[RMDB]
RNA sequence: GGGAACGACUCGAGUAGAGUCGAAAAUAAUCAAGAUGAAUCGUUUUUAGUUUGCUUGCUUACCUUAUGGGCCAGCAUGAGAUCUACUUGAAUCUUUUUAUGUAGGCAGAAAGCGACGGAAUUUAAAGCUAUACCACUAGUUCGCUAGUGGUAUAGCAAAAGAAACAACAACAACAAC
Reactivity to 2A3 in 0.01 (KOAc 150mM, MgCl2 10mM, bicine 150mM(pH8.5), 24C), signal-to-noise 4, nucleotides 027 to 126: u180a030a060u130c100a100a010g030a040u130g070a050a080u010c020g070u040u040u020u070u050a170g020u030u040u040g040c010u020u010g000c020u100u050a090c010c040u090u140a130u300g010g000g000c010c030a000g010c000a000u020g110a050g010a100u000c000u030a030c030u060u040g030a050a050u080c050u000u130u030u010u000a090u100g000u010a000g030g000c010a030g050a060a030a010g010c010g010a010c050g080g020a040a040u080u100u080a120a100a000
Reactivity to DMS in 0.01 (KOAc 150mM, MgCl2 10mM, bicine 150mM(pH8.5), 24C), signal-to-noise 2, nucleotides 027 to 126: u010a090a070u010c160a070a080g020a050u020g030a150a060u000c010g000u020u000u010u000u000a150g070u020u000u010g000c020u020u010g000c000u000u000a070c090c100u020u030a100u060g020g020g000c010c030a060g010c020a010u000g030a050g020a020u020c000u000a100c170u010u000g000a050a060u000c010u050u000u010u000u010a070u040g000u010a000g010g040c030a130g000a020a020a020g000c000g020a030c090g000g010a060a060u010u000u010a070a060a090
An RNA of 177 nucleotides, treated with 2A3 and DMS and read out base by base. The RNA was probed in 150 mM KOAc, 10 mM MgCl2 and 150 mM bicine (pH 8.5) at 24 C. The data come from the RNA Mapping Database (RMDB), library OK1LIB. For DMS, 3,293 sequencing reads were counted.